[RMDB]
RNA sequence: GGGAACGACUCGAGUAGAGUCGAAAAGUGUGAACCACAGGAACCACGAGUUUAGUUCCGAGGAACCAACUGCGGUUCCAAGGGCUAAACACCCUCGCCCCGAAGCAAGUAAGAUAGAGAAAAAGCGCCGUAAUACAAUGUUCGCAUUGUAUUACGGAAAAGAAACAACAACAACAAC
Reactivity to DMS in 0.01 (KOAc 150mM, MgCl2 10mM, bicine 150mM(pH8.5), 24C), signal-to-noise 2, nucleotides 027 to 126: g000u010g030u020g010a060a110c010c010a060c050a110g000g000a040a110c020c030a040c010g010a040g010u010u000u000a010g030u020u000c000c000g000a300g000g000a020a000c010c000a030a100c120u010g010c140g030g020u000u000c010c020a000a160g000g020g000c010u000a030a060a040c040a210c030c010c000u000c100g010c040c000c000c100g020a050a050g010c080a020a030g020u000a120a130g000a080u000a060g010a100g010a110a110a020a020a040g000c200g010
Reactivity to 2A3 in 0.01 (KOAc 150mM, MgCl2 10mM, bicine 150mM(pH8.5), 24C), signal-to-noise 2, nucleotides 027 to 126: g080u060g030u050g060a030a030c040c020a090c060a140g000g030a010a030c010c000a030c040g060a030g030u010u010u000a030g000u300u110c000c020g000a020g010g000a000a000c000c000a010a090c250u270g130c070g060g000u000u000c010c010a000a020g000g000g000c010u000a000a000a000c000a030c000c010c000u020c050g090c010c000c010c030g060a020a000g050c080a030a090g060u090a100a070g050a140u210a090g060a030g040a120a140a030a010a060g050c070g010
Chemical mapping of a 177-nucleotide RNA with DMS and 2A3. The RNA was probed in 150 mM KOAc, 10 mM MgCl2 and 150 mM bicine (pH 8.5) at 24 C. Reactivities are rounded to 0.1 and cut off at 0 and 3. DMS adducts were read by reverse transcription with MarathonRT.